[RMDB]
Structure probing data (DMS and 2A3) for a 177-nucleotide construct. Values cover nucleotides 27 to 126. For DMS the reverse transcriptase was MarathonRT. The reactions ran in a buffer of 150 mM KOAc, 10 mM MgCl2 and 150 mM bicine (pH 8.5), at 24 C.
RNA sequence: GGGAACGACUCGAGUAGAGUCGAAAAGAUAUGGACGGUGCAUGGGACAUGAUUACUAGUCGGAAACGACUAGAAUCAACAGCCCAUGCCGUCCUAAGUCAAAGUGCCGCUCUUCGGAGCGGCACAAGAUGAGCGUAAUGUUCGCAUUACGCUCAUCAAAAGAAACAACAACAACAAC
Reactivity to DMS in 0.01 (KOAc 150mM, MgCl2 10mM, bicine 150mM(pH8.5), 24C), signal-to-noise 2, nucleotides 027 to 126: g010a030u000a200u010g000g000a000c000g000g030u010g030c070a020u000g010g000g010a080c110a100u010g000a010u000u000a130c000u000a010g010u000c020g000g000a050a070a100c000g010a020c000u010a000g000a010a000u000c000a050a090c230a200g000c010c000c000a000u000g000c000c010g010u000c000c000u000a000a040g000u000c010a110a130a160g020u000g000c010c000g020c010u000c000u000u020c230g030g030a020g000c000g000g000c000a020c000a020a020
Reactivity to 2A3 in 0.01 (KOAc 150mM, MgCl2 10mM, bicine 150mM(pH8.5), 24C), signal-to-noise 2, nucleotides 027 to 126: g020a000u030a000u100g000g000a000c040g010g120u300g070c060a040u020g020g020g010a070c090a220u120g000a040u040u100a300c020u010a000g000u000c000g010g040a000a010a010c020g000a000c000u000a000g010a000a000u010c000a020a120c130a110g050c000c000c020a000u010g040c000c010g010u000c000c000u000a010a010g000u000c030a080a090a110g030u010g020c000c000g010c000u020c020u060u110c300g140g000a010g000c000g010g010c010a010c000a020a010